Notes:
The record gives the reactivity of an RNA of 177 nucleotides to DMS and 2A3. For DMS, 2,895 sequencing reads were counted. The RNA was probed in 150 mM KOAc, 10 mM MgCl2 and 150 mM bicine (pH 8.5) at 24 C. High 2A3 reactivity points to a flexible backbone, as in loops and unpaired stretches. The data come from the RNA Mapping Database (RMDB), library OK2TRN.
RNA sequence: GGGAACGACUCGAGUAGAGUCGAAAAUGCAGAGGCCCCCUCCUGGCCUCUCCCAGGCUGGGCCACCUGCCAGAGGCGCCUCCAGGGGCGGGGAGAGCUGUCGGCCUGCCUGCACCACGUGCUCUGGCCAACAUAGACGAUUCGUCGUCUAUGUUGGAAAAGAAACAACAACAACAAC
Reactivity to DMS in 0.01 (KOAc 150mM, MgCl2 10mM, bicine 150mM(pH8.5), 24C), signal-to-noise 3, nucleotides 027 to 126: u000g020c080a110g020a110g010g010c020c010c070c070c060u000c020c020u000g010g010c050c020u010c090u000c040c040c020a150g000g020c090u000g010g000g020c110c040a100c070c080u000g000c020c050a060g010a090g010g010c090g020c110c040u010c070c090a110g000g000g010g010c030g030g000g010g020a040g000a090g010c050u010g010u010c120g020g020c010c010u010g010c050c020u010g000c040a070c020c020a160c100g020u020g010c010u000c020u000g000g010
Reactivity to 2A3 in 0.01 (KOAc 150mM, MgCl2 10mM, bicine 150mM(pH8.5), 24C), signal-to-noise 1, nucleotides 027 to 126: u060g000c000a000g070a090g130g000c010c000c000c010c030u060c020c000u010g040g020c000c020u040c020u020c040c010c000a020g040g000c040u090g000g010g030c010c020a040c020c020u030g040c030c000a050g020a060g090g090c040g000c020c030u060c070c050a050g020g000g000g010c040g000g010g010g020a020g000a030g000c070u080g140u260c070g060g010c020c000u060g040c000c000u010g000c000a040c040c000a040c050g020u050g020c000u050c000u020g020g000